[RMDB]
RNA sequence: GGGAACGACUCGAGUAGAGUCGAAAAGAUAUGGAUUGACUGCGCCUGUCGAUGAUGGACAUGAGGCUACCAUCGGAAACGAUGGGUCCUCAACAGCCAUAUCGACAGGCGCAGUCAAUCCUAAGUCCUAACUCUUACAGUUCGCUGUAAGAGUUAGAAAAGAAACAACAACAACAAC
Reactivity to DMS in 0.01 (KOAc 150mM, MgCl2 10mM, bicine 150mM(pH8.5), 24C), signal-to-noise 2, nucleotides 027 to 126: g000a170u000a300u000g020g010a010u010u000g010a020c000u000g010c010g010c000c000u010g000u000c000g010a020u000g010a030u010g000g000a050c130a300u000g000a020g010g000c130u010a150c000c000a010u000c000g000g000a120a150a220c000g020a010u000g020g000g000u010c000c010u000c000a030a060c300a140g000c000c000a010u000a050u010c000g030a010c030a000g010g010c000g000c010a000g000u000c020a000a000u010c000c000u000a010a060g000u010c030